RNA sequence: GGGAACGACUCGAGUAGAGUCGAAAAGCAGUUCUGAAGAAUAAGGACAACAAACAGAUCCCAAGUUGUCCUUAUCACAGGACUGAGUGGAGUUCGUUAUAUAGUAUACUCUUGGGAUCUGUUGUAUACUAUAUUCUUCGAACUCUUCGAACUGAGACACUACCAACUUCUUCGGAAGUUGGUAGUGAAAAGAAACAACAACAACAAC
Reactivity to 2A3 in 0.01 (KOAc 150mM, MgCl2 10mM, bicine 150mM(pH8.5), 24C), signal-to-noise 2, nucleotides 027 to 156: g060c020a000g000u010u000c020u120g130a170a090g020a080a040u000a000a020g050g020a020c040a070a000c040a030a240a010c030a020g010a010u010c000c000c030a020a040g000u040u040g010u030c030c000u000u000a000u020c000a000c000a010g000g000a010c000u030g020a050g070u160g000g080a010g000u010u010c000g010u050u000a030u000a010u020a020g030u010a010u010a060c020u030c000u100u060g000g030g010a000u000c010u000g060u060u050g000u000a010u010a030c010u010a000u000a010u140u030c090u000u030c000g000a010a010c000u000c000u000u070c040g070a120a040c100u220g020a050g000a050
Reactivity to DMS in 0.01 (KOAc 150mM, MgCl2 10mM, bicine 150mM(pH8.5), 24C), signal-to-noise 1, nucleotides 027 to 156: g030c020a040g010u000u010c010u020g000a130a130g040a180a090u000a050a020g000g020a060c040a040a060c080a080a080a050c060a030g000a060u000c000c000c010a060a300g040u000u000g040u010c010c020u000u000a010u000c010a220c010a040g000g010a010c010u010g000a110g040u000g030g000a060g010u000u000c010g040u000u000a040u010a050u010a090g010u000a020u000a040c030u000c130u010u010g000g000g040a040u040c050u010g000u020u010g020u000a010u010a060c010u000a040u000a040u000u020c120u030u010c000g010a000a030c020u000c010u000u000c010g080a090a150c030u030g000a280g000a300